[RMDB]
RNA sequence: GGGAACGACUCGAGUAGAGUCGAAAAACACUGAGAUCUUCAAACAGAGGCUGCCACUCUAAGCAAACAGAUCCCGAGCCCUGGACUCUGAAGCUUGGGCCCAGUUCUCCUUUUCUCCGGGAGACUGGAGCAUAGAUACGUUCGCGUAUCUGUGCUCAAAAGAAACAACAACAACAAC
Reactivity to 2A3 in 0.01 (KOAc 150mM, MgCl2 10mM, bicine 150mM(pH8.5), 24C), signal-to-noise 9, nucleotides 027 to 126: a000c070a020c030u060g030a030g020a140u070c030u100u080c100a060a130a100c040a050g050a060g100g010c030u040g030c020c010a060c020u050c020u080a060a050g040c050a080a060a100c020a040g040a070u050c000c010c020g030a020g020c010c000c010u040g040g020a070c040u030c030u130g060a070a010g020c010u030u040g010g020g000c000c020c000a030g010u150u040c010u020c010c000u020u080u050u020c060u020c030c010g010g000g000a010g000a000c010u020g030
Reactivity to DMS in 0.01 (KOAc 150mM, MgCl2 10mM, bicine 150mM(pH8.5), 24C), signal-to-noise 9, nucleotides 027 to 126: a070c080a080c060u010g010a070g000a060u010c020u010u010c070a050a090a090c110a060g010a090g000g010c030u010g010c040c040a060c070u010c040u010a070a080g010c090a060a090a120c110a070g010a080u010c010c010c030g000a100g000c020c020c020u000g000g000a050c050u020c070u010g010a100a120g010c040u000u000g000g010g000c060c020c000a010g000u020u020c000u000c000c000u000u010u000u000c020u010c010c050g000g000g000a020g000a010c030u000g000